Source information
Source: RMDB libraries RFM100 and RFMREP, as collected in RNAgym. Chemical mapping of a 177-nucleotide RNA with DMS and 2A3. 2A3 is a SHAPE reagent: it acylates the 2'-hydroxyl of flexible nucleotides of all four kinds. 2A3 adducts were read by reverse transcription with SuperScript II with manganese. Reactivities are given for positions 27 through 126.
[RMDB]
RNA sequence: GGGAACGACUCGAGUAGAGUCGAAAAGGGCCUUGUGCUUACUCAUGGGGGUCUUCUUCUUCUCUCACACAUUGUGCUGAUGUGAUUCUCAUGACUCUUGCUUGGAGAGAUCUGGACGAGGAGUUGGAACGCACAUCAUGUUCGCAUGAUGUGCGUUAAAAGAAACAACAACAACAAC
Reactivity to DMS in 0.01 (KOAc 150mM, MgCl2 10mM, bicine 150mM(pH8.5), 24C), signal-to-noise 2, nucleotides 027 to 126: g000g010g010c060c030u000u030g010u010g030c080u000u020a070c140u000c020a040u010g010g000g010g000g000u010c030u050u000c060u010u030c010u000u000c000u000c000u000c100a180c110a080c050a090u020u010g030u000g020c160u020g000a030u000g010u010g000a100u010u000c030u000c030a080u070g020a040c020u000c030u000u010g010c050u040u010g010g040a020g000a110g000a080u010c020u000g010g010a100c090g010a030g000g000a080g000u000u010g010g010
Reactivity to 2A3 in 0.01 (KOAc 150mM, MgCl2 10mM, bicine 150mM(pH8.5), 24C), signal-to-noise 2, nucleotides 027 to 126: g000g040g040c030c020u050u100g060u070g040c090u150u060a060c020u000c060a050u060g030g020g000g080g040u000c010u030u000c000u030u020c030u040u010c020u010c000u030c020a040c000a000c000a040u100u040g030u040g090c050u110g000a040u000g050u040g060a080u070u020c010u000c030a050u110g050a030c020u000c000u000u060g100c050u090u120g070g020a060g000a000g000a110u000c020u050g000g010a010c060g020a000g040g010a010g030u010u020g030g030